[RMDB]
RNA sequence: GGGAACGACUCGAGUAGAGUCGAAAAGAUAUGGAUCUGAACUACGACCGAAGCGUCAACAGCUCGGAAACGAGACAUGACGCUAAGGUCGCAGAUCCUAAGUCAAAGAUUGCGUUCGCGCAAUCAACAACCAACAACGGUUCGCCGUUGUUGGUUGAAAAGAAACAACAACAACAAC
Reactivity to 2A3 in 0.01 (KOAc 150mM, MgCl2 10mM, bicine 150mM(pH8.5), 24C), signal-to-noise 2, nucleotides 027 to 126: g050a020u060a050u180g000g000a000u040c000u000g030a100a200c130u130a060c300g000a000c000c010g050a070a000g000c000g000u000c020a040a070c020a200g040c020u000c010g030g000a130a050a020c020g000a000g000a020c090a150u120g000a000c000g000c000u000a010a020g010g070u000c000g000c000a000g020a000u000c000c000u010a080a010g040u050c040a110a000a120g020a010u000u020g000c010g000u060u170c270g000c010g000c160a000a000u010c000a000a040
Reactivity to DMS in 0.01 (KOAc 150mM, MgCl2 10mM, bicine 150mM(pH8.5), 24C), signal-to-noise 3, nucleotides 027 to 126: g020a020u000a300u020g050g020a000u000c000u000g020a120a060c130u010a300c050g010a010c000c000g040a300a060g000c000g020u000c000a060a080c230a230g000c000u000c000g010g010a040a030a130c020g020a010g010a030c100a130u000g000a040c010g010c000u010a010a270g010g000u000c000g000c010a000g000a010u000c000c000u000a030a040g030u000c030a070a110a090g000a000u000u000g000c000g000u000u010c170g000c010g010c000a000a000u000c000a080a100
The data come from the RNA Mapping Database (RMDB), library TTRDEL. This 177-nucleotide RNA was probed chemically with 2A3 and DMS. For 2A3, 3,658 sequencing reads were counted. In probing experiments dimethyl sulfate is read out at A N1 and C N3, which are open when not base-paired. 2A3 adducts were read by reverse transcription with SuperScript II with manganese. The RNA was probed in 150 mM KOAc, 10 mM MgCl2 and 150 mM bicine (pH 8.5) at 24 C. DMS adducts were read by reverse transcription with MarathonRT.